[RMDB]
RNA sequence: GGGAACGACUCGAGUAGAGUCGAAAACGGUGUGUUCGCACACCGAAAAAACCGUAGGAAUCGAAGAACUGGAUGUACGAAGAACACGAUUCGAAAGAGUCGUGGGAGUACGCCAGGGAGAUUCCUAAACGGAAAAAGGUGGUGUUCGCACCACCAAUCGGAAUGCAUAGUUCGCUAUGCAUUCCGAAAAAGAAACAACAACAACAAC
Reactivity to 2A3 in 0.01 (KOAc 150mM, MgCl2 10mM, bicine 150mM(pH8.5), 24C), signal-to-noise 1, nucleotides 027 to 156: c030g050g000u000g000u050g000u140u120c150g100c060a000c000a010c020c020g020a020a000a000a010a000a000c040c000g020u020a020g000g000a000a010u000c020g060a300a090g020a210a070c000u020g010g040a270u190g130u000a000c000g140a210a070g010a050a000c000a000c000g040a000u000u000c020g020a040a010a010g000a020g010u000c000g000u010g020g000g000a000g000u000a000c010g050c000c000a020g000g010g010a080g000a010u000u000c000c000u010a000a010a010c020g000g010a090a090a010a200a030g010g010u050g000g040u030g010u100u140c180g010c030a000c000c000a000c030c030a000a010

Chemical mapping of a 207-nucleotide RNA with 2A3. Values cover nucleotides 27 to 156.